An RNA of 207 nucleotides, treated with 2A3 and read out base by base. It was measured as part of the RMDB library RNAMAK. The RNA was probed in 150 mM KOAc, 10 mM MgCl2 and 150 mM bicine (pH 8.5) at 24 C. For 2A3, 686 sequencing reads were counted.
RNA sequence: GGGAACGACUCGAGUAGAGUCGAAAAUGUCGGUUUCGACCGACAAAAAAGAUAUGGAAUCCCACGGUAGCUUUUGACGGCUUGUUGGUCGGAAACGACCAACAAAGCCGAUAAGCUAUUGGGAUUCCUAAGUCAAAAACCCCAAUUCGUUGGGGAAUCUAGCGAUAACAUUCGUGUUAUCGCUAGAAAAAGAAACAACAACAACAAC
Reactivity to 2A3 in 0.01 (KOAc 150mM, MgCl2 10mM, bicine 150mM(pH8.5), 24C), signal-to-noise 1, nucleotides 027 to 156: u040g000u000c000g030g000u000u110u150c220g060a030c000c010g000a010c010a000a050a000a000a000a080g040a020u040a010u040g030g000a000a000u000c030c000c000a000c090g080g000u000a000g010c000u100u160u090u300g190a150c040g000g010c010u000u030g020u040u000g030g000u010c020g010g010a050a100a080c000g000a020c090c000a000a000c000a000a000a000g020c000c010g010a000u000a000a000g010c000u010a000u000u150g000g000g000a000u000u000c000c000u000a060a000g000u000c000a030a040a080a300a300c000c110c150c010a000a040u190u030c270g030u060u090g010g000g000g150a060a100